The record gives the reactivity of an RNA of 207 nucleotides to 2A3 and DMS. Values cover nucleotides 27 to 156. For 2A3, 1,399 sequencing reads were counted. The RNA was probed in 150 mM KOAc, 10 mM MgCl2 and 150 mM bicine (pH 8.5) at 24 C. The data come from the RNA Mapping Database (RMDB), library OK3TST. The DMS profile rests on 2,307 reads.
RNA sequence: GGGAACGACUCGAGUAGAGUCGAAAAACAUACAUUCUAAUGUGGUAAUUACCAAAGAAAACAAAUAGCUUGUGAUCAGAAUUAGAUAAUUUUACUUAUCCUGAAAUUGAUGGUGUAAAACAAGCUGUGAUAACUUAAUAUAUCCAAGGGAACAUCACUGAUUUUCUUCAUUCGUGAAGAAAAUCAGAAAAGAAACAACAACAACAAC
Reactivity to 2A3 in 0.01 (KOAc 150mM, MgCl2 10mM, bicine 150mM(pH8.5), 24C), signal-to-noise 3, nucleotides 027 to 156: a000c070a040u290a070c030a060u120u180c050u140a180a090u090g010u100g030g010u010a130a140u130u130a090c020c020a040a060a020g020a010a070a010a010c060a020a090a040u050a020g030c010u030u010g010u030g040a030u040c010a040g130a220a160u080u100a090g010a050u030a070a070u080u160u110u100a080c030u020u020a000u040c000c030u080g030a100a170a160u110u080g050a040u100g060g150u080g020u080a060a120a000a010c000a010a000g000c020u000g010u010g030a070u060a050a000c010u040u050a070a030u110a050u070a070u120c090c030a040a030g080g020g060a030a000c010a030u190c040a000
Reactivity to DMS in 0.01 (KOAc 150mM, MgCl2 10mM, bicine 150mM(pH8.5), 24C), signal-to-noise 1, nucleotides 027 to 156: a120c040a090u010a070c030a070u000u000c050u000a040a120u000g010u010g020g000u000a100a100u000u000a130c010c020a030a080a110g000a180a070a160a140c070a130a130a090u000a030g000c020u000u000g040u000g020a090u000c010a050g010a100a120u010u010a020g040a060u000a030a010u000u010u020u000a090c130u000u000a050u000c020c080u010g000a020a070a100u000u000g020a060u000g000g010u010g040u000a060a050a120a080c020a000a030g000c030u000g000u000g000a080u000a060a150c040u010u020a020a150u000a110u010a140u000c030c040a070a190g010g000g000a090a060c060a040u000c020a180